This 177-nucleotide RNA was probed chemically with 2A3 and DMS. Values cover nucleotides 27 to 126. It was measured as part of the RMDB library M2PK50. For 2A3, 3,984 sequencing reads were counted. The DMS profile rests on 1,940 reads. The RNA was probed in 150 mM KOAc, 10 mM MgCl2 and 150 mM bicine (pH 8.5) at 24 C.

RNA sequence: GGGAACGACUCGAGUAGAGUCGAAAAUGACGUCGUUUCGACGACGUCAACAUAAAAUCAGCGGUAAUUAAUUAGGAGGCGUUACCGCUGAACGCCUCCAUACGAGAGGGCUAUUCGUAGCCCUCAACAUGACCUAACACUUCGGUGUUAGGUCAUGAAAAGAAACAACAACAACAAC
Reactivity to 2A3 in 0.01 (KOAc 150mM, MgCl2 10mM, bicine 150mM(pH8.5), 24C), signal-to-noise 3, nucleotides 027 to 126: u060g010a000c000g000u000c010g000u000u050u110c220g080a020c020g010a000c010g000u000c000a000a000c010a020u240a020a110a020a060u020c000a000g020c000g080g100u100a050a040u190u250a030a060u060u150a240g000g000a010g000g010c000g010u000u020a080c000c000g000c000u000g000a000a000c000g000c000c000u010c020c050a050u110a090c210g040a180g000a000g110g010g000c000u000a000u040u080c180g050u020a000g000c010c000c000u000c000a010a000
Reactivity to DMS in 0.01 (KOAc 150mM, MgCl2 10mM, bicine 150mM(pH8.5), 24C), signal-to-noise 2, nucleotides 027 to 126: u010g000a000c000g010u000c000g020u000u000u000c190g000a030c000g000a020c000g000u000c000a060a060c160a090u000a080a040a120a120u000c000a010g000c000g000g030u000a000a030u000u000a030a050u000u020a110g010g010a010g040g000c010g010u000u000a060c010c000g020c000u000g020a010a030c020g010c000c000u000c010c050a100u000a040c180g000a210g010a000g000g000g020c000u000a030u010u010c220g020u010a020g020c000c000c000u010c000a020a050